Overview:
Chemical mapping of a 177-nucleotide RNA with DMS. The reactions ran in a buffer of 150 mM KOAc, 10 mM MgCl2 and 150 mM bicine (pH 8.5), at 24 C. For DMS, 687 sequencing reads were counted. Source: RMDB library RFMREP, as collected in RNAgym. DMS adducts were read by reverse transcription with MarathonRT.
[RMDB]
RNA sequence: GGGAACGACUCGAGUAGAGUCGAAAAGUGACUCGCAGGUGGAGACACGCUGUACACCGGGAAUGCAUCGAACUCGCGUUUAAGCGGUCUGUAAGGCCGUCGGCGUCCUGGGGAAGGGUCACGGAAGCUAAGACGAGCACUUCGGUGCUCGUCUUAGAAAAGAAACAACAACAACAAC
Reactivity to DMS in 0.01 (KOAc 150mM, MgCl2 10mM, bicine 150mM(pH8.5), 24C), signal-to-noise 1, nucleotides 027 to 126: g000u000g000a010c000u000c010g020c000a010g000g020u000g000g000a280g000a270c060a030c010g010c030u010g010u000a180c060a070c000c010g030g000g020a060a060u000g020c010a160u030c040g000a020a010c000u020c300g010c300g020u000u000u000a020a110g000c040g000g000u000c000u000g000u000a010a020g000g000c010c000g020u000c030g040g020c010g010u000c000c000u000g000g010g000g020a140a170g050g000g030u000c000a010c000g010g000a090a110g000